The record gives the reactivity of an RNA of 207 nucleotides to 2A3. Reactivities are given for positions 27 through 156. The reactions ran in a buffer of 150 mM KOAc, 10 mM MgCl2 and 150 mM bicine (pH 8.5), at 24 C.
[RMDB]
RNA sequence: GGGAACGACUCGAGUAGAGUCGAAAAGCCAGUUUCGACUGGCGCUCGCGCGUACUACAAGGCACGCGAGGAGCGUGAUGACCCAUGGAGAUCCCAAAUAGGAUCUCUGGGCAAGCGCUCCUCGUCUUGUAUCGCUAUUAUCGAUAUUCGUAUCGAAUUACGCCUGCGGCUUCGGCCGCAGGCGUAAAAAAGAAACAACAACAACAAC
Reactivity to 2A3 in 0.01 (KOAc 150mM, MgCl2 10mM, bicine 150mM(pH8.5), 24C), signal-to-noise 1, nucleotides 027 to 156: g000c000c000a010g030u000u070u200c190g090a040c010u000g020g000c000g060c070u040c020g000c000g000c000g000u090a060c010u010a000c040a020a000g000g040c220a060c220g040c000g000a000g000g000a000g010c010g000u030g010a110u270g070a240c000c000c010a020u240g270g000a010g000a010u060c000c140c170a190a280a300u300a190g000g000a010u000c000u000c020u000g000g000g030c000a000a080g000c030g030c020u000c010c000u000c000g020u000c000u000u000g000u000a030u300c010g000c030u000a060u040u160a160u060c000g000a000u000a020u090u170c250g010u100a000u020c000g000a030a040